Source: RMDB library M2PK50, as collected in RNAgym. The record gives the reactivity of an RNA of 177 nucleotides to 2A3 and DMS. DMS adducts were read by reverse transcription with MarathonRT. For DMS, 1,190 sequencing reads were counted. Conditions: 150 mM KOAc, 10 mM MgCl2 and 150 mM bicine (pH 8.5), 24 C.
RNA sequence: GGGAACGACUCGAGUAGAGUCGAAAACGCGAACUGUUCGCAGUUCGCGAAAUAACAAACAACAGCUAACCUACUGCGAAAAGCCCUAGCUAAGUAGGUAAAAAAGAGGAAAGUUCGCUUUCCUCAACUGAUAAUUCACGUUCGCGUGAAUUAUCAGAAAAGAAACAACAACAACAAC
Reactivity to 2A3 in 0.01 (KOAc 150mM, MgCl2 10mM, bicine 150mM(pH8.5), 24C), signal-to-noise 1, nucleotides 027 to 126: c000g010c010g010a000a000c000u020g010u050u080c220g000c090a000g020u000u010c010g030c000g030a000a000a000u040a010a020c100a050a100a020c000a010a030c040a060g120c060u090a020a030c040c000u010a000c000u000g010c000g040a100a020a060a020g030c000c000c000u010a010g000c000u000a070a000g000u030a000g000g000u000a000a070a010a000a050a040g040a000g000g040a000a010a010g030u200u300c300g090c260u000u000u010c000c020u010c010a010a000
Reactivity to DMS in 0.01 (KOAc 150mM, MgCl2 10mM, bicine 150mM(pH8.5), 24C), signal-to-noise 2, nucleotides 027 to 126: c000g020c010g010a000a000c000u010g010u010u020c150g010c020a010g020u000u000c000g000c000g040a010a070a100u000a050a110c280a090a070a030c190a040a090c120a090g010c090u020a080a040c010c010u000a010c000u010g020c060g000a070a050a100a150g040c020c010c010u000a120g010c040u010a070a040g000u020a030g030g000u000a000a050a060a020a090a030g000a000g000g040a050a010a010g000u000u000c130g010c000u020u000u000c000c000u000c010a040a100